[RMDB]
RNA sequence: GGGAACGACUCGAGUAGAGUCGAAAACGCUGUACCAUGCAUGAGCGCUCAUGAGCGCAUCAUGUACGAUCCAUGAGGUACCAUGCACUAGCAGCUAGGACUCUAGGUCUAGUGAUCGAUCGAUCUCCGAAGCUAAGUAAUUCGUUACUUAGCUUCGAAAAGAAACAACAACAACAAC
Reactivity to 2A3 in 0.01 (KOAc 150mM, MgCl2 10mM, bicine 150mM(pH8.5), 24C), signal-to-noise 9, nucleotides 027 to 126: c070g000c040u040g010u030a050c030c030a060u070g000c000a010u010g020a010g040c070g010c030u020c050a170u240g160a030g030c030g010c030a040u020c010a010u030g050u060a050c030g020a020u000c020c010a020u020g020a020g070g050u060a080c090c000a020u030g000c000a010c030u040a030g000c020a010g030c030u030a070g110g090a100c030u020c010u130a040g140g100u050c020u020a060g090u050g140a080u050c050g010a030u020c010g000a030u010c020u030c020
Reactivity to DMS in 0.01 (KOAc 150mM, MgCl2 10mM, bicine 150mM(pH8.5), 24C), signal-to-noise 9, nucleotides 027 to 126: c190g010c080u000g010u000a050c220c240a250u000g010c000a010u000g010a100g020c040g010c000u000c090a120u010g010a060g030c010g010c020a070u000c050a030u000g000u000a060c090g000a040u000c050c020a030u000g000a080g000g010u010a080c110c030a030u000g000c010a020c090u000a260g000c110a030g010c010u000a070g000g010a060c100u000c010u000a030g010g000u000c050u000a060g000u000g000a060u000c040g000a120u000c010g000a090u000c030u000c030